This 207-nucleotide RNA was probed chemically with DMS and 2A3.
For DMS, 2,367 sequencing reads were counted.
It was measured as part of the RMDB library RNAMAK.
For 2A3, 1,255 sequencing reads were counted.

RNA sequence: GGGAACGACUCGAGUAGAGUCGAAAAUCCUAAGUCCAGUCGGAGUACGAUAAAGACAACAGCAUCUUCGGAAACGAAGAUGACAUGUCUGAAGCGUACGCGAAACGACUGGAUAUGGAAAAACAUGCGAGUCUCCGUUCGCGGAGACUCGCAUGAACGAAUCUAAGAAGUUCGCUUCUUAGAUUCGAAAAGAAACAACAACAACAAC
Reactivity to DMS in 0.01 (KOAc 150mM, MgCl2 10mM, bicine 150mM(pH8.5), 24C), signal-to-noise 1, nucleotides 027 to 156: u000c000c020u000a080a300g020u000c000c000a070g010u000c000g000g000a290g010u000a010c010g000a030u010a260a240a010g010a030c010a030a060c120a170g070c000a040u000c000u010u020c000g020g010a190a090a300c010g050a000a010g000a030u000g000a020c000a300u000g000u010c020u000g030a170a150g030c010g010u000a000c020g000c050g020a180a200a200c000g000a020c000u000g010g020a000u000a020u010g010g000a050a160a110a060a210c010a030u000g000c030g000a060g040u030c000u010c010c000g030u000u000c290g020c060g080g000a070g000a000c000u000c000g040c000a010u000g000a010a110
Reactivity to 2A3 in 0.01 (KOAc 150mM, MgCl2 10mM, bicine 150mM(pH8.5), 24C), signal-to-noise 1, nucleotides 027 to 156: u010c000c000u020a080a020g010u010c000c000a000g000u000c020g000g050a130g020u000a000c010g000a000u020a040a110a000g010a000c010a070a030c040a050g050c000a000u000c000u010u000c000g030g030a100a080a080c020g000a000a030g000a000u080g020a090c000a080u030g010u020c000u040g010a260a020g010c000g010u000a010c000g000c010g070a190a120a000c000g010a010c010u000g010g000a000u020a010u020g010g000a020a160a000a000a060c000a000u030g000c000g000a010g030u010c010u000c020c040g030u060u070c230g000c010g100g000a000g020a000c000u020c010g000c010a010u000g000a000a000